[RMDB]
RNA sequence: GGGAACGACUCGAGUAGAGUCGAAAAGAAUACGACAGCUUUUGUGGUUAUCAAUUGUGAAUUCUGAGACAAAUUGCAUAGUCACAAAAGUGAUCGUAAUCAAAAGUGUUGUCCUUCGGGACAACACGCAAAGCUUAAUGUUCGCAUUAAGCUUUGCAAAAGAAACAACAACAACAAC
Reactivity to DMS in 0.01 (KOAc 150mM, MgCl2 10mM, bicine 150mM(pH8.5), 24C), signal-to-noise 5, nucleotides 027 to 126: g010a080a080u000a010c000g010a010c100a300g020c000u010u000u000u000g010u000g000g000u010u000a000u000c000a000a010u000u000g010u000g010a090a120u020u020c260u010g010a160g010a080c030a010a020a050u000u000g000c240a000u000a010g010u000c010a000c000a010a010a010a010g020u000g000a150u000c010g010u000a020a060u010c040a070a080a100a150g010u000g010u000u000g000u000c000c000u000u030c220g030g000g010a000c000a000a000c000a010c010
Reactivity to 2A3 in 0.01 (KOAc 150mM, MgCl2 10mM, bicine 150mM(pH8.5), 24C), signal-to-noise 6, nucleotides 027 to 126: g010a010a010u020a020c000g000a010c010a020g080c010u040u010u000u000g000u010g010g000u010u010a010u000c000a010a010u010u030g050u050g130a110a160u300u090c150u270g070a060g020a090c020a030a150a090u000u010g000c020a000u010a010g010u010c000a000c000a010a000a000a000g000u010g010a010u010c010g000u020a010a030u030c020a000a050a060a080g010u010g000u010u000g000u000c000c000u000u060c190g040g000g000a000c000a000a000c000a000c000